[RMDB]
RNA sequence: GGGAACGACUCGAGUAGAGUCGAAAAAGCAUUGUUGCAGCAUAACAAUUGGAAGACUCCAUUGAUGGACGUCUCCAUCAACAAGAACUGUCGGAUAAACUAUGGUACACCCAUCCCUUAGCGUGUUAUGAAGUCAUUACAAAAAGAAGAAGCAGAACUAUUAUGCGUAUUUCGAUACGCAUAAUAGAAAAGAAACAACAACAACAAC
Reactivity to DMS in 0.01 (KOAc 150mM, MgCl2 10mM, bicine 150mM(pH8.5), 24C), signal-to-noise 4, nucleotides 027 to 156: a090g020c070a100u000u000g020u020u000g010c030a090g030c040a110u000a070a100c050a080a190u000u010g020g000a130a070g020a130c040u000c000c010a160u010u010g010a150u020g020g020a050c190g030u000c030u000c000c020a030u000c020a060a060c060a090a140g000a050a140c060u000g010u000c030g040g020a090u000a080a080a050c050u000a040u000g020g010u010a050c030a100c040c020c040a130u000c030c010c010u000u000a050g040c020g020u010g000u000u000a090u010g010a070a060g020u000c040a030u030u010a160c050a050a060a060a080a090g010a060a070g000a080a090g030c030a070g020a070a190
Reactivity to 2A3 in 0.01 (KOAc 150mM, MgCl2 10mM, bicine 150mM(pH8.5), 24C), signal-to-noise 5, nucleotides 027 to 156: a000g060c060a060u050u060g020u050u070g010c060a030g050c020a050u090a140a090c050a120a180u100u070g000g020a120a040g010a040c010u000c020c000a050u070u240g120a150u160g060g020a040c090g060u010c030u000c030c000a030u070c020a010a070c020a030a020g040a080a040c070u070g040u080c020g060g000a030u060a070a100a010c040u050a060u110g010g020u040a010c010a080c060c010c010a050u050c030c000c000u030u050a020g020c050g050u040g020u060u030a090u080g050a060a010g020u030c020a000u050u110a060c090a060a090a020a010a010g090a040a010g070a050a010g040c100a010g030a090a000